[RMDB]
RNA sequence: GGGAACGACUCGAGUAGAGUCGAAAACAGCAUUGAGACUGUAGAGCCUACAUUGACGGCCAUAUAAUAUAGUGUAAAUGCAAUAUCAAGUUGACUGUCAUUAUCUUCAUAAAUACGACGAACCAAGUCACUAAUCGCACUUCGGUGCGAUUAGUGAAAAAGAAACAACAACAACAAC
Reactivity to DMS in 0.01 (KOAc 150mM, MgCl2 10mM, bicine 150mM(pH8.5), 24C), signal-to-noise 1, nucleotides 027 to 126: c090a110g020c010a010u000u000g030a150g030a060c020u020g020u000a050g030a170g020c000c000u020a260c100a100u000u000g020a050c140g000g000c010c060a180u020a100u000a030a140u040a060u000a050g020u000g010u000a090a080a040u000g010c000a110a160u020a110u000c140a070a130g010u000u010g000a090c010u000g020u000c000a040u020u050a080u000c170u010u000c070a050u010a050a070a020u010a050c030g010a040c000g030a100a110c070c080a020a110g000
Annotation
An RNA of 177 nucleotides, treated with DMS and read out base by base. The reactions ran in a buffer of 150 mM KOAc, 10 mM MgCl2 and 150 mM bicine (pH 8.5), at 24 C. The DMS profile rests on 612 reads. For DMS the reverse transcriptase was MarathonRT. Reactivities are given for positions 27 through 126.